RNA sequence: GGGAACGACUCGAGUAGAGUCGAAAACUGGGUACUAGAGUUUGUGAAGGCUGACUCGGUCUACAGUACCUUACCCAUACACUACUUGUAGACUAGACCGUGUUAGCCUUUAGUCAUAAGUGGUGAAGGAACACGGAGAAUUCGUUCUUUGUGUUCCAAAAGAAACAACAACAACAAC
Reactivity to 2A3 in 0.01 (KOAc 150mM, MgCl2 10mM, bicine 150mM(pH8.5), 24C), signal-to-noise 9, nucleotides 027 to 126: c040u040g020g010g020u040a020c030u070a060g080a110g140u080u160u200g130u110g080a070a010g030g000c030u040g020a020c010u010c040g010g010u000c010u030a030c030a040g010u020a030c000c000u010u050a080c000c000c010a020u100a050c060a010c000u100a010c010u040u050g040u070a040g010a020c010u020a020g020a030c010c020g030u030g040u080u060a010g010c000c000u010u010u010a010g000u000c020a030u020a140a060g020u020g050g020u040g050a090a070
Reactivity to DMS in 0.01 (KOAc 150mM, MgCl2 10mM, bicine 150mM(pH8.5), 24C), signal-to-noise 9, nucleotides 027 to 126: c090u010g010g000g020u010a030c150u010a060g000a150g010u020u020u010g010u010g010a040a020g000g010c010u000g000a020c000u000c020g000g000u000c000u010a040c120a050g010u010a030c050c040u010u020a070c030c020c030a130u030a080c090a140c110u010a020c050u010u010g010u010a050g010a090c130u020a050g010a020c050c040g000u010g000u010u010a030g010c020c010u000u000u000a020g010u010c060a060u020a060a060g010u010g000g010u010g000a160a130
This 177-nucleotide RNA was probed chemically with 2A3 and DMS.
For DMS, 45,059 sequencing reads were counted.
For 2A3 the reverse transcriptase was SuperScript II with manganese.
For DMS the reverse transcriptase was MarathonRT.
Source: RMDB library OK1LIB, as collected in RNAgym.
The RNA was probed in 150 mM KOAc, 10 mM MgCl2 and 150 mM bicine (pH 8.5) at 24 C.
For 2A3, 66,007 sequencing reads were counted.